This 207-nucleotide RNA was probed chemically with DMS and 2A3.
DMS adducts were read by reverse transcription with MarathonRT.
For 2A3 the reverse transcriptase was SuperScript II with manganese.
For DMS, 4,848 sequencing reads were counted.
The RNA was probed in 150 mM KOAc, 10 mM MgCl2 and 150 mM bicine (pH 8.5) at 24 C.
RNA sequence: GGGAACGACUCGAGUAGAGUCGAAAAAGCUGACAGACGGUCUGGAUAUGCCGGACCAGUCACGGGCGCGUCUGCAUAAAGCGAUUGGCGCUGUCCUGAGUGAAAGUAAUCCGGCUUCCGCCCUUAAUCAUCUCAACCAUGCGUUACAGCUCGAUCCAUUCUUCUCCAAAUUCGUUUGGAGAAGAAUAAAAGAAACAACAACAACAAC
Reactivity to DMS in 0.01 (KOAc 150mM, MgCl2 10mM, bicine 150mM(pH8.5), 24C), signal-to-noise 2, nucleotides 027 to 156: a050g010c020u000g000a190c070a100g010a050c050g020g020u000c000u010g040g020a140u000a090u000g060c010c050g010g020a050c050c030a130g010u000c010a030c050g030g020g020c030g020c000g000u000c000u000g020c030a160u000a050a120a290g010c030g000a130u020u000g010g020c020g020c010u010g020u000c020c020u010g000a130g050u000g000a060a050a140g030u000a080a140u000c000c020g010g000c000u000u000c020c010g000c010c000c010u000u010a070a090u000c070a050u000c020u020c030a070a070c060c050a120u000g020c040g000u000u000a090c070a130g000c010u000c040g010a140u000c040c050
Reactivity to 2A3 in 0.01 (KOAc 150mM, MgCl2 10mM, bicine 150mM(pH8.5), 24C), signal-to-noise 7, nucleotides 027 to 156: a000g030c030u020g030a050c040a110g050a070c040g010g020u080c090u200g050g030a080u110a060u300g030c000c010g000g000a020c000c020a030g030u010c000a000c010g000g010g000c010g010c010g010u000c040u080g010c040a090u260a190a210a060g020c020g130a130u100u220g000g000c000g000c080u100g030u130c000c020u090g110a080g040u010g030a040a040a070g040u090a040a090u010c010c000g000g000c000u020u010c010c010g000c010c000c010u060u110a080a030u120c080a040u040c040u020c080a050a100c040c020a060u150g000c050g070u070u090a050c020a010g010c000u020c030g050a050u030c030c010